Structure probing data (2A3) for a 207-nucleotide construct.

[RMDB]
RNA sequence: GGGAACGACUCGAGUAGAGUCGAAAAGAUUUAUACAGAUGGAGAUACACAAAUGUUUGAAUCCCAGUAACAAAAAUCCUGGUAUCUCGGGUAUACAGUAGUGCAGAUACUGUAUUUUUAAUGCUCCUUAGGUUUUCCAUCUUCGGAUGGAAAACAACGACACUUUAAGGUUCGCCUUAAAGUGUCGAAAAGAAACAACAACAACAAC
Reactivity to 2A3 in 0.01 (KOAc 150mM, MgCl2 10mM, bicine 150mM(pH8.5), 24C), signal-to-noise 1, nucleotides 027 to 156: g000a000u070u090u230a100u020a030c000a020g070a090u020g050g000a000g000a000u020a020c050a010c050a010a170a070u140g040u050u090u160g050a050a040u040c020c040c020a090g060u170a130a040c130a080a150a010a010a070u020c000c000u000g020g010u000a020u000c000u010c000g000g000g000u000a000u010a000c010a000g000u030a000g030u020g210c100a000g080a290u010a010c010u010g010u000a000u010u050u000u010u220a200a170u110g000c010u110c030c100u100u050a050g000g150u040u010u000u010c000c000a010u010c000u050u000c160g180g000a000u000g000g000a000a000a000a000c010a000a000

Source information
Conditions: 150 mM KOAc, 10 mM MgCl2 and 150 mM bicine (pH 8.5), 24 C. Source: RMDB library M2RFOK, as collected in RNAgym. 2A3 adducts were read by reverse transcription with SuperScript II with manganese.